This 177-nucleotide RNA was probed chemically with DMS and 2A3. DMS adducts were read by reverse transcription with MarathonRT. Conditions: 150 mM KOAc, 10 mM MgCl2 and 150 mM bicine (pH 8.5), 24 C.

RNA sequence: GGGAACGACUCGAGUAGAGUCGAAAAGAGAUCCGCAAGACGUAGGCACCUAAACUACAAAGGAUCAUUGGGUGAGAAUUGAAGCCAUCAAGAGGCGUCUUGAGAUUCAAAAGAUCCGAGAGGAUCAGGUAUCGAACAGGUUCGCCUGUUCGAUACCAAAAGAAACAACAACAACAAC
Reactivity to DMS in 0.01 (KOAc 150mM, MgCl2 10mM, bicine 150mM(pH8.5), 24C), signal-to-noise 1, nucleotides 027 to 126: g000a090g000a000u000c000c000g040c100a040a000g000a100c060g050u000a080g000g000c000a060c000c040u000a010a060a070c020u040a090c080a050a090a110g030g000a030u050c230a150u000u000g030g010g040u000g000a030g050a180a050u050u000g000a030a120g000c130c060a100u010c030a030a090g020a190g000g000c090g000u000c000u000u000g010a060g000a000u000u000c000a040a030a140a210g000a020u000c000c000g000a210g000a200g000g000a030u010c000a100
Reactivity to 2A3 in 0.01 (KOAc 150mM, MgCl2 10mM, bicine 150mM(pH8.5), 24C), signal-to-noise 1, nucleotides 027 to 126: g010a000g000a020u000c000c000g000c140a020a000g050a000c080g000u120a020g080g020c000a020c000c000u180a190a070a060c000u020a040c010a080a220a000g030g000a030u020c000a030u000u020g010g000g000u060g030a080g060a050a000u040u020g010a030a000g040c050c000a090u050c070a030a050g010a120g060g000c040g120u000c000u000u010g000a040g010a060u040u060c000a010a000a000a100g000a000u000c000c000g010a030g000a000g000g000a010u000c010a000